[RMDB]
RNA sequence: GGGAACGACUCGAGUAGAGUCGAAAAGCGGCGGCCACGCCGUGGUCCCCGGGGUCCUGAGUCCUUCGGGGCCCGGUUGCUCGGAAGUGAUGAAUUGAUCAGAUAGACGAGGCCGGGCUUGUCCCGGGGUGAUCAAUUAUUUCGAUAAUUGAUCACCAAAAGAAACAACAACAACAAC
Reactivity to DMS in 0.01 (KOAc 150mM, MgCl2 10mM, bicine 150mM(pH8.5), 24C), signal-to-noise 9, nucleotides 027 to 126: g010c010g010g010c010g010g010c180c300a130c040g010c010c000g010u000g010g000u020c010c010c000c060g010g000g000g000u010c020c040u010g010a070g010u030c140c100u020u000c010g010g000g000g010c000c000c000g000g000u000u020g000c030u000c000g000g010a250a110g000u000g000a060u010g000a160a190u020u050g000a080u010c010a030g000a150u030a090g000a300c010g000a020g000g000c010c000g000g000g000c010u000u010g000u010c000c000c000g000g010
Reactivity to 2A3 in 0.01 (KOAc 150mM, MgCl2 10mM, bicine 150mM(pH8.5), 24C), signal-to-noise 8, nucleotides 027 to 126: g010c000g080g000c000g020g060c110c050a180c050g000c000c010g010u020g010g040u080c000c000c000c000g000g010g000g000u030c010c020u090g040a080g120u190c060c030u100u060c030g000g010g000g000c000c000c000g000g000u060u250g050c010u000c000g020g030a090a070g100u030g050a060u020g040a090a300u240u160g030a060u050c010a010g140a250u140a030g090a040c000g000a000g000g000c010c000g000g010g000c010u040u080g030u020c000c000c000g000g030